[RMDB]
RNA sequence: GGGAACGACUCGAGUAGAGUCGAAAAUAUUGCCCCAGGCGGGAUGAAGGGGCUGAGUGGGCGCAUGCCCUCAAUGAAGCCACUUGCGAACUUGGGGCGACAGGCGGUGUCGAGACGUCCCCUUCGGACGACUGGUGAACUUCGGUUCACCAGUCGUAAAAGAAACAACAACAACAAC
Reactivity to 2A3 in 0.01 (KOAc 150mM, MgCl2 10mM, bicine 150mM(pH8.5), 24C), signal-to-noise 1, nucleotides 027 to 126: u110a050u020u080g000c010c000c030c000a010g070g000c040g080g010g110a080u160g230a010a000g060g040g000g010c020u000g010a040g000u000g000g010g040c110g000c040a060u300g000c040c070c000u000c000a040a230u160g090a050a010g000c000c000a020c000u000u100g040c020g000a010a010c000u000u000g000g000g000g000c050g000a000c000a000g020g030c050g000g000u040g050u130c020g000a000g010a020c040g000u010c020c000c000c010u030u190c060g090g000
The record gives the reactivity of an RNA of 177 nucleotides to 2A3. Source: RMDB library RFM100, as collected in RNAgym. Conditions: 150 mM KOAc, 10 mM MgCl2 and 150 mM bicine (pH 8.5), 24 C.